[RMDB]
RNA sequence: GGGAACGACUCGAGUAGAGUCGAAAAGUGUGUGUAUCUGUAUCCUUGUCUGUGCAUGCACACGUGUGUCUGGGAGUGUGAAUGUGUGUGACUGGUUGUAGGGAACUAGUUAUGUGCCUUGUGUUGGGUUCAAUCGUCCCUUCGGGGACGAUUGAACAAAAGAAACAACAACAACAAC
Reactivity to 2A3 in 0.01 (KOAc 150mM, MgCl2 10mM, bicine 150mM(pH8.5), 24C), signal-to-noise 1, nucleotides 027 to 126: g020u000g000u000g000u000g000u050a080u080c110u040g060u070a030u040c000c000u060u030g060u050c110u150g050u080g000c050a000u050g060c010a050c000a000c090g010u040g000u000g000u040c010u010g050g000g000a100g030u000g020u000g010a180a080u110g090u010g040u000g000u000g090a050c050u000g000g040u000u060g030u040a020g020g050g030a010a010c000u010a010g010u120u000a200u130g090u040g040c000c000u040u060g000u000g000u060u010g000g000